[RMDB]
RNA sequence: GGGAACGACUCGAGUAGAGUCGAAAAGAUAUGGAAUCACCAGAGAAGAUGCUCACGAAGAACGUAAGCAGUCGGAAACGACUGCUUACGGGAGUGAGCAAUUUCGACGAAGGUGAUUCCUAAGUCAGUUAGGAAGAAAGUUCGCUUUCUUCCUAACAAAAGAAACAACAACAACAAC
Reactivity to DMS in 0.01 (KOAc 150mM, MgCl2 10mM, bicine 150mM(pH8.5), 24C), signal-to-noise 5, nucleotides 027 to 126: g020a050u010a300u000g000g000a020a000u000c010a010c010c010a050g010a300g000a050a170g000a060u000g010c010u000c000a010c000g010a140a180g020a170a170c010g010u000a010a010g010c000a000g020u000c000g020g020a080a080a220c010g010a010c000u010g010c000u010u000a000c010g000g000g010a090g000u000g010a000g010c000a010a010u000u000u000c040g020a270c200g000a300a120g010g010u000g010a010u000u000c000c000u010a030a070g000u000c050a120
Reactivity to 2A3 in 0.01 (KOAc 150mM, MgCl2 10mM, bicine 150mM(pH8.5), 24C), signal-to-noise 3, nucleotides 027 to 126: g020a010u080a050u200g010g000a010a000u010c000a000c000c000a010g020a000g000a100a010g070a050u060g010c010u010c010a070c040g300a300a160g060a150a020c000g030u000a000a000g010c000a000g010u000c010g030g000a020a090a010c010g010a010c010u010g000c010u010u000a000c000g010g000g000a030g010u010g000a000g040c000a000a000u000u010u050c080g100a140c060g050a090a070g000g000u000g000a000u000u000c000c000u000a000a000g010u000c070a030